[RMDB]
RNA sequence: GGGAACGACUCGAGUAGAGUCGAAAAGGCGCCCGCGGGCGAGCAGCGUGACGCAGCGACGGCCCGCCCGGGCUUCCGGGGCAUCACCCGGUCGGCGCGGUCGCGGCGCGCCGAGGGCCCGACGCCUGCUGAUACACAAUUUCGAUUGUGUAUCAGCAAAAGAAACAACAACAACAAC
Reactivity to 2A3 in 0.01 (KOAc 150mM, MgCl2 10mM, bicine 150mM(pH8.5), 24C), signal-to-noise 1, nucleotides 027 to 126: g010g020c020g040c050c030c000g050c000g000g030g030c060g020a060g020c050a020g000c030g100u150g080a090c140g000c170a060g020c010g080a090c010g140g010c000c000c000g000c000c000c000g050g000g000c000u060u020c050c020g000g000g000g020c100a230u090c060a200c030c000c020g010g000u020c000g030g000c050g000c090g090g030u100c030g000c040g030g030c000g000c000g010c000c000g010a070g000g060g010c010c020c000g010a010c020g000c000c010u010